[RMDB]
RNA sequence: GGGAACGACUCGAGUAGAGUCGAAAAGAAGAACACGGAGGAAGAAAACCUCCGUAAAAGAAAAGGGCAAACGCCAUAAGAAAUGGCGAAGCACUGUAUGCCCAAAGCAGAAAGCUAAUCAGUGUAACACUCAGUAGCAUUUCGAUGCUACUGAGUGAAAAGAAACAACAACAACAAC
Reactivity to 2A3 in 0.01 (KOAc 150mM, MgCl2 10mM, bicine 150mM(pH8.5), 24C), signal-to-noise 4, nucleotides 027 to 126: g070a040a000g020a040a000c020a000c060g000g010a010g020g010a080a140g090a230a210a010a050c010c000u000c000c000g000u000a000a000a000a000g060a000a110a000a010g010g010g000c030a030a060a030c000g000c010c010a010u090a040a080g190a170a230a020u010g000g000c000g010a020a010g020c000a000c020u000g000u030a040u130g030c010c000c010a060a050a000g000c020a020g150a090a160a020g010c050u060a060a000u080c020a000g010u010g000u070a030a010
Reactivity to DMS in 0.01 (KOAc 150mM, MgCl2 10mM, bicine 150mM(pH8.5), 24C), signal-to-noise 3, nucleotides 027 to 126: g000a290a170g010a220a100c200a000c000g000g000a010g040g010a140a150g070a140a100a150a180c020c010u000c000c000g020u000a030a080a040a110g000a040a090a070a150g020g000g050c080a060a020a150c030g000c000c000a000u020a080a060g020a070a160a030u000g000g000c000g010a090a060g000c010a030c000u000g030u020a150u040g000c010c000c000a030a050a050g000c090a110g010a070a120a080g000c030u010a180a070u000c010a000g010u010g000u000a140a270

An RNA of 177 nucleotides, treated with 2A3 and DMS and read out base by base. The DMS profile rests on 2,767 reads. For 2A3 the reverse transcriptase was SuperScript II with manganese. For DMS the reverse transcriptase was MarathonRT. 2A3 is a SHAPE reagent: it acylates the 2'-hydroxyl of flexible nucleotides of all four kinds.